[RMDB]
The record gives the reactivity of an RNA of 177 nucleotides to 2A3. Reactivities are given for positions 27 through 126.
RNA sequence: GGGAACGACUCGAGUAGAGUCGAAAAUUGGCGGGGACCGGGCGUGCGGUCCCGCUCCCCGUAAUGUACGGAGGUAGAAGAAAGGGCUCUGGCCCUCUCGGCGUUAUGUCUUCGGUGCUUGCGGCUUGCCGUAGCAUUGUUUCGACAAUGCUACGGCAAAAGAAACAACAACAACAAC
Reactivity to 2A3 in 0.01 (KOAc 150mM, MgCl2 10mM, bicine 150mM(pH8.5), 24C), signal-to-noise 3, nucleotides 027 to 126: u110u080g110g010c020g030g000g000g020a010c020c000g000g130g080c140g080u210g040c050g080g040u040c000c000c000g020c020u000c060c000c000c000g000u110a070a060u110g020u030a000c000g040g020a010g000g010u140a010g050a100a020g030a090a100a010g000g000g010c050u070c130u200g270g010c030c040c000u000c000u000c000g030g000c050g040u090u180a130u100g050u040c020u020u010c020g120g000u020g020c030u020u040g030c020g060g000c050u020u030
Notes
The data come from the RNA Mapping Database (RMDB), library RFM100.